[RMDB]
Structure probing data (DMS and 2A3) for a 177-nucleotide construct.
Source: RMDB library OK2TRN, as collected in RNAgym.
For DMS the reverse transcriptase was MarathonRT.
The RNA was probed in 150 mM KOAc, 10 mM MgCl2 and 150 mM bicine (pH 8.5) at 24 C.
Values are in units of 0.01, from 0 to 300, in steps of 10.
RNA sequence: GGGAACGACUCGAGUAGAGUCGAAAACGAUCGUGCAUGCUCUGCAAUCACACGGGCAUACCGUGGCGAUGACCGGCGACGGCGUCAACGACGUGCUUGCCCUCAAGGACGCUGAUAUCGGUGUGGCACCCGUUGUUGGGUUCGCCCAACAACGGGUAAAAGAAACAACAACAACAAC
Reactivity to DMS in 0.01 (KOAc 150mM, MgCl2 10mM, bicine 150mM(pH8.5), 24C), signal-to-noise 2, nucleotides 027 to 126: c100g020a060u000c060g010u000g000c070a040u040g010c050u030c010u020g020c100a210a070u000c080a070c000a080c070g010g000g000c240a140u030a140c020c020g060u000g010g020c150g010a030u000g040a100c100c080g000g010c180g000a090c000g000g000c020g020u000c020a050a080c110g020a100c040g000u000g000c110u000u000g030c000c000c020u030c150a020a150g000g020a040c050g020c010u000g020a080u000a070u010c030g000g000u000g000u000g010g010c140
Reactivity to 2A3 in 0.01 (KOAc 150mM, MgCl2 10mM, bicine 150mM(pH8.5), 24C), signal-to-noise 1, nucleotides 027 to 126: c020g050a200u060c020g030u070g010c070a030u060g010c010u040c090u080g030c040a040a050u010c010a010c000a020c060g000g000g050c050a060u130a240c010c000g020u000g000g030c130g030a060u060g080a090c020c040g050g000c030g020a030c080g000g000c000g020u010c020a070a080c020g110a000c060g040u080g050c000u090u060g060c090c000c000u060c050a030a040g110g000a010c000g040c040u040g020a050u020a030u270c050g050g000u050g000u030g080g000c030